[RMDB]
RNA sequence: GGGAACGACUCGAGUAGAGUCGAAAAACCCGCGGCGUGCUUUCUCCAUCAAGCCAGGUCGACAGGGAGCUGGCCCCGUUCACCCCAAGGUCUUCCCUCGGAGCCGUGGAUGUCAAGGAAACGGACAGACUCAGGUUUGAUUCGUCAAACCUGAGUCAAAAGAAACAACAACAACAAC
Reactivity to DMS in 0.01 (KOAc 150mM, MgCl2 10mM, bicine 150mM(pH8.5), 24C), signal-to-noise 1, nucleotides 027 to 126: a010c020c000c030g030c050g020g030c070g030u010g010c050u000u000u010c010u000c010c030a100u010c120a080a160g030c000c020a070g000g000u000c040g020a150c130a110g010g000g010a030g010c040u010g000g010c050c050c000c000g040u000u000c070a240c050c000c030c060a110a050g030g000u010c000u010u010c010c050c010u000c100g000g010a110g000c020c020g070u010g010g020a110u000g050u020c120a070a110g010g020a100a090a080c060g010g000a070c240a120
The record gives the reactivity of an RNA of 177 nucleotides to DMS. It was measured as part of the RMDB library OK2TRN.